[RMDB]
RNA sequence: GGGAACGACUCGAGUAGAGUCGAAAACCCAAAGCGUUCGCGCUUUGGGAAAGAAUAAACGAGCGAAAUGAAUGAUGUGGACGCUCGUAAAAACCACAUCAAAAAGUCAACGGUUCGCCGUUGACAACCUAAUCUGUGAGUUCGCUCACAGAUUAGGAAAAGAAACAACAACAACAAC
Reactivity to DMS in 0.01 (KOAc 150mM, MgCl2 10mM, bicine 150mM(pH8.5), 24C), signal-to-noise 2, nucleotides 027 to 126: c000c000c000a000a000a000g000c000g000u000u010c200g020c000g010c000u000u030u000g030g000g000a080a000a040g000a120a080u020a080a120a120c040g000a020g000c020g020a090a140a110u000g010a110a110u010g000a010u010g020u000g010g010a190c050g000c010u010c020g030u000a010a040a060a100a040c030c000a010c010a000u010c000a100a070a110a100a120g010u000c000a000a010c000g000g000u000u010c160g020c010c000g010u010u000g010a000c000a040a030
Reactivity to 2A3 in 0.01 (KOAc 150mM, MgCl2 10mM, bicine 150mM(pH8.5), 24C), signal-to-noise 4, nucleotides 027 to 126: c000c010c000a000a000a000g010c010g020u020u110c160g020c000g000c030u000u000u000g020g000g020a070a110a010g060a050a090u220a140a130a030c040g010a000g010c060g070a060a040a170u220g100a090a140u110g010a060u010g000u010g000g040a060c170g000c010u010c030g010u060a010a010a010a010a020c000c010a000c000a010u010c010a020a040a030a050a000g000u010c000a000a000c000g010g040u020u050c210g030c040c010g000u010u000g000a000c000a000a000

This 177-nucleotide RNA was probed chemically with DMS and 2A3. The RNA was probed in 150 mM KOAc, 10 mM MgCl2 and 150 mM bicine (pH 8.5) at 24 C. The DMS profile rests on 1,418 reads. It was measured as part of the RMDB library M2PK50.